[RMDB]
Conditions: 150 mM KOAc, 10 mM MgCl2 and 150 mM bicine (pH 8.5), 24 C. Chemical mapping of a 177-nucleotide RNA with 2A3 and DMS. For DMS the reverse transcriptase was MarathonRT. For 2A3, 5,265 sequencing reads were counted. It was measured as part of the RMDB library OK1LIB. Values cover nucleotides 27 to 126.
RNA sequence: GGGAACGACUCGAGUAGAGUCGAAAAUCUUUGACCAUUUCAGUUCUGAGUUGCUUCAAGUUUUCACACGUCAAAAAGAUAGAAGGAACGUCUUUCAGUUCGUCUUUGAAGAUUGAAUCAAUUUGGAGUUAUAUGUCUCCUUCGGGAGACAUAUAACAAAAGAAACAACAACAACAAC
Reactivity to 2A3 in 0.01 (KOAc 150mM, MgCl2 10mM, bicine 150mM(pH8.5), 24C), signal-to-noise 8, nucleotides 027 to 126: u030c040u110u090u170g110a110c010c040a110u050u130u160c110a060g070u030u010c020u030g030a030g010u010u000g020c000u010u010c010a100a300g030u050u020u020u040c020a040c020a020c080g120u060c080a090a070a010a040a030g040a030u110a080g100a140a060g190g040a100a070c100g090u050c070u010u130u060c030a090g020u050u060c010g020u020c110u080u100u110g020a040a030g020a040u020u030g000a010a020u020c000a010a030u000u000u040g020g010a070
Reactivity to DMS in 0.01 (KOAc 150mM, MgCl2 10mM, bicine 150mM(pH8.5), 24C), signal-to-noise 4, nucleotides 027 to 126: u070c070u000u020u000g020a140c060c080a150u020u020u010c070a070g010u010u010c000u010g000a050g010u010u000g000c050u000u000c030a020a010g010u010u010u000u010c010a090c300a060c160g000u010c130a070a140a010a080a010g000a040u000a080g010a050a050g010g000a030a080c300g010u030c090u020u000u000c010a060g000u010u010c000g000u000c010u000u000u000g000a060a050g000a040u000u000g000a030a050u000c040a010a010u020u000u000g000g020a210